[RMDB]
RNA sequence: GGGAACGACUCGAGUAGAGUCGAAAAGGAGCAGUUAUUGAUGAUUUUAGCCUGAAUAUCGAUGCUUUCUUACCUGGCGAUAGUCGUUUGGAUGCAGAAGAGAUAAAAUCUCGCAUGCUUAGACUGCCUAUGGGUACUUCUUCGGAAGUACCCAUAGAAAAGAAACAACAACAACAAC
Reactivity to DMS in 0.01 (KOAc 150mM, MgCl2 10mM, bicine 150mM(pH8.5), 24C), signal-to-noise 6, nucleotides 027 to 126: g000g010a020g010c020a050g010u000u000a060u000u000g010a060u010g010a100u000u010u000u010a170g020c100c070u000g000a060a040u000a040u000c050g010a110u010g000c030u000u000u010c020u010u000a210c030c020u010g010g010c030g010a090u000a050g020u000c010g010u000u000u000g010g000a050u000g020c010a090g020a110a200g010a030g010a070u000a050a040a040a300u000c000u010c030g010c050a070u000g000c030u000u000a060g010a040c010u000g010c050
Reactivity to 2A3 in 0.01 (KOAc 150mM, MgCl2 10mM, bicine 150mM(pH8.5), 24C), signal-to-noise 3, nucleotides 027 to 126: g040g000a050g000c000a030g020u130u160a130u150u120g090a060u020g060a060u000u090u060u220a030g030c030c020u060g040a030a020u050a020u070c060g050a040u020g020c000u000u060u080c010u000u050a080c000c000u020g050g010c020g070a070u080a140g030u010c090g080u070u140u080g060g010a030u020g010c000a020g040a300a020g010a080g020a040u070a120a230a040a070u000c010u000c010g040c030a010u060g050c000u000u000a030g000a030c010u040g000c000